Annotation: Source: RMDB library RFM100, as collected in RNAgym. An RNA of 177 nucleotides, treated with 2A3 and DMS and read out base by base. Reactivities are given for positions 27 through 126. The DMS profile rests on 1,053 reads. The 2A3 profile rests on 488 reads. Conditions: 150 mM KOAc, 10 mM MgCl2 and 150 mM bicine (pH 8.5), 24 C.
RNA sequence: GGGAACGACUCGAGUAGAGUCGAAAAAGUCAGAGGAAGGAUUGGUCGACGGUAGGUCAGUAUGCCCCGAAUAUCCCGGGCUACACGCGGGCUACAAUGGAUAGGACAAUGGGUAACUACACCGAAACAGUCCGGAUUAGUUCGCUAAUCCGGACUGAAAAGAAACAACAACAACAAC
Reactivity to 2A3 in 0.01 (KOAc 150mM, MgCl2 10mM, bicine 150mM(pH8.5), 24C), signal-to-noise 1, nucleotides 027 to 126: a010g110u070c060a000g000a000g180g000a050a000g010g060a030u000u130g040g020u080c000g070a090c000g020g030u040a080g030g030u060c030a000g040u000a080u150g040c060c040c000c000g080a080a000u060a000u010c070c090c000g000g030g010c160u100a060c040a000c020g070c130g080g030g010c000u180a070c060a040a090u010g020g020a020u110a130g040g000a040c060a080a100u300g000g010g000u020a000a000c000u060a000c030a000c000c000g040a060a000a000
Reactivity to DMS in 0.01 (KOAc 150mM, MgCl2 10mM, bicine 150mM(pH8.5), 24C), signal-to-noise 1, nucleotides 027 to 126: a090g000u000c040a020g000a210g030g000a200a000g000g000a040u000u000g000g010u000c070g020a050c120g040g000u000a070g000g010u090c130a050g040u030a000u070g000c000c040c000c160g000a040a250u050a000u040c050c000c060g000g010g010c050u000a070c160a120c150g050c190g040g000g000c110u000a010c050a020a110u000g000g000a060u000a150g000g070a070c170a010a050u010g050g030g040u000a120a020c040u040a100c060a060c050c040g000a220a000a150